[RMDB]
Chemical mapping of a 177-nucleotide RNA with DMS and 2A3. Values are in units of 0.01, from 0 to 300, in steps of 10. It was measured as part of the RMDB libraries RFM100 and RFMREP. DMS (dimethyl sulfate) methylates the pairing face of unpaired adenines and cytosines. The reactions ran in a buffer of 150 mM KOAc, 10 mM MgCl2 and 150 mM bicine (pH 8.5), at 24 C. For DMS the reverse transcriptase was MarathonRT.

RNA sequence: GGGAACGACUCGAGUAGAGUCGAAAAUGAGAGGCGCGAGUACGAGCCGGGACAUGCCGGAGUCACUGCGUACGUUCUGAAGAACGGGCCAGGGAGUGUACGGCAGGGGCGAGGCUAAGGAGUGAAACGUAAUUGCGCUAUUCGUAGCGCAAUUACGAAAAGAAACAACAACAACAAC
Reactivity to DMS in 0.01 (KOAc 150mM, MgCl2 10mM, bicine 150mM(pH8.5), 24C), signal-to-noise 4, nucleotides 027 to 126: u030g010a110g030a080g000g010c070g050c050g000a120g010u010a060c050g010a120g020c040c040g000g000g010a080c160a160u010g000c010c010g020g000a200g010u020c020a050c000u010g000c120g000u010a050c000g030u010u000c000u000g050a220a170g000a010a010c030g000g010g020c040c020a050g000g000g000a030g000u030g000u000a170c000g010g020c020a050g010g010g000g010c060g000a190g020g000c050u010a060a100g000g000a110g010u010g020a100a060a170
Reactivity to 2A3 in 0.01 (KOAc 150mM, MgCl2 10mM, bicine 150mM(pH8.5), 24C), signal-to-noise 5, nucleotides 027 to 126: u260g010a070g020a030g030g010c020g000c020g030a020g030u070a050c040g020a020g020c010c000g010g030g020a090c080a060u070g030c010c010g030g030a040g050u020c000a010c050u020g010c040g050u030a010c010g000u020u000c030u150g280a270a170g010a030a020c010g000g010g010c020c000a010g000g000g020a070g030u080g010u070a030c030g020g000c010a020g010g000g000g000c020g030a040g000g000c030u040a040a060g020g020a050g040u090g040a050a030a040